[RMDB]
RNA sequence: GGGAACGACUCGAGUAGAGUCGAAAACGCUGAAAAUAAAAUCUCAGAGAGAGAAAAAUGAGAUGAACGUGUGAACGGUGUGUUAGAAUACUCUCUCGAAACUCCGGAAACACGGAAAAGCGGAAAAGGGUACAUUCUAGUUCGCUAGAAUGUACCCAAAAGAAACAACAACAACAAC
Reactivity to DMS in 0.01 (KOAc 150mM, MgCl2 10mM, bicine 150mM(pH8.5), 24C), signal-to-noise 2, nucleotides 027 to 126: c000g040c030u030g000a040a030a140a100u040a160a080a240a000u000c010u000c000a000g020a080g000a140g040a120g000a070a030a020a050a100u000g020a010g010a070u020g000a010a080c050g010u100g040u010g030a180a290c020g040g000u000g000u000g000u000u000a140g000a170a090u030a090c200u040c120u020c120u010c040g000a140a100a020c000u020c000c000g010g000a120a100a030c000a010c000g000g040a020a060a160a040g010c000g000g000a050a040a030a050
Reactivity to 2A3 in 0.01 (KOAc 150mM, MgCl2 10mM, bicine 150mM(pH8.5), 24C), signal-to-noise 2, nucleotides 027 to 126: c010g000c010u040g020a100a060a000a000u130a030a090a050a010u000c000u000c000a020g050a020g010a000g000a000g100a140a130a000a050a110u050g000a000g010a000u020g050a030a030c000g000u000g000u010g080a090a000c000g020g020u030g000u030g070u150u040a010g000a000a010u190a290c060u060c000u000c010u000c070g020a050a000a010c010u000c000c000g000g040a110a040a000c000a020c000g030g000a010a050a000a000g000c050g030g060a000a050a020a110

The record gives the reactivity of an RNA of 177 nucleotides to DMS and 2A3.
The RNA was probed in 150 mM KOAc, 10 mM MgCl2 and 150 mM bicine (pH 8.5) at 24 C.
2A3 is a SHAPE reagent: it acylates the 2'-hydroxyl of flexible nucleotides of all four kinds.